[RMDB]
RNA sequence: GGGAACGACUCGAGUAGAGUCGAAAAGUUAAAUUAAUCAUCGAAACUGUAAACAAAUUCACUAACAAAUAAUCCCUUUGUUUUAUUGUCCUUUGAGUAUAAGCACUAAAUUGUUUAAUCCUUUUCAGUUAGUAACAUACUUCGGUAUGUUACUAACAAAAGAAACAACAACAACAAC
Reactivity to 2A3 in 0.01 (KOAc 150mM, MgCl2 10mM, bicine 150mM(pH8.5), 24C), signal-to-noise 5, nucleotides 027 to 126: g060u040u070a060a030a040u090u210a080a040u080c070a020u040c050g100a100a030a130c030u070g070u230a050a020a070c060a030a080a040u180u120c040a030c140u100a140a020c050a080a070a060u100a030a060u080c000c000c000u020u030u020g100u020u070u020u020a090u100u070g040u070c030c020u070u040u080g040a040g030u100a080u050a150a040g000c010a020c070u090a080a170a060u040u000g040u020u030u040a020a040u050c030c000u010u030u010u050c020a000
Reactivity to DMS in 0.01 (KOAc 150mM, MgCl2 10mM, bicine 150mM(pH8.5), 24C), signal-to-noise 5, nucleotides 027 to 126: g020u010u020a060a080a070u040u010a100a080u010c070a040u000c060g000a090a060a070c040u000g010u000a030a050a090c060a030a070a080u020u010c070a080c090u000a020a050c110a030a080a070u010a120a130u000c010c020c030u000u000u000g000u000u000u000u010a030u020u010g010u000c060c050u010u000u000g010a040g010u010a050u010a060a090g000c090a030c070u000a040a070a150u010u000g000u010u000u010a030a110u000c070c010u000u000u010u010c150a110
Chemical mapping of a 177-nucleotide RNA with 2A3 and DMS. Conditions: 150 mM KOAc, 10 mM MgCl2 and 150 mM bicine (pH 8.5), 24 C.